An RNA of 177 nucleotides, treated with 2A3 and DMS and read out base by base. Reactivities are given for positions 27 through 126. The RNA was probed in 150 mM KOAc, 10 mM MgCl2 and 150 mM bicine (pH 8.5) at 24 C. 2A3 adducts were read by reverse transcription with SuperScript II with manganese.
RNA sequence: GGGAACGACUCGAGUAGAGUCGAAAAGAUAUGGACCCGUACGCAGCGAAGAACUACGUCGGAAACGACGUAGGGAGCUGGUAUAGGGUCCUAAGUCAAAAGUGAUACCACUUCGGUGGUAUCACAAUCAAGGUUAUUCCUUCGGGAAUAACCUUGAAAAAGAAACAACAACAACAAC
Reactivity to 2A3 in 0.01 (KOAc 150mM, MgCl2 10mM, bicine 150mM(pH8.5), 24C), signal-to-noise 1, nucleotides 027 to 126: g020a020u010a000u100g020g020a020c030c020c000g050u030a020c300g040c090a010g040c020g280a300a020g020a030a000c000u020a000c000g000u000c000g000g000a000a040a030c000g000a010c000g010u000a010g000g010g010a020g000c020u020g050g030u030a080u210a120g000g000g020u010c000c000u000a010a020g010u020c030a010a150a050a080g000u010g000a010u000a010c010c010a030c050u090u120c300g170g000u000g000g000u020a000u000c000a000c000a010a020
Reactivity to DMS in 0.01 (KOAc 150mM, MgCl2 10mM, bicine 150mM(pH8.5), 24C), signal-to-noise 2, nucleotides 027 to 126: g000a030u000a270u000g000g000a020c000c010c000g010u000a000c000g050c040a020g010c000g000a150a170g000a200a260c000u000a000c010g040u000c010g000g010a080a060a150c000g010a010c020g010u000a010g010g000g000a030g010c010u010g020g010u000a000u010a160g050g010g000u000c000c010u000a000a040g000u000c030a160a080a180a110g030u000g000a040u000a000c010c000a020c000u010u010c300g020g020u000g000g000u010a000u000c000a000c000a030a100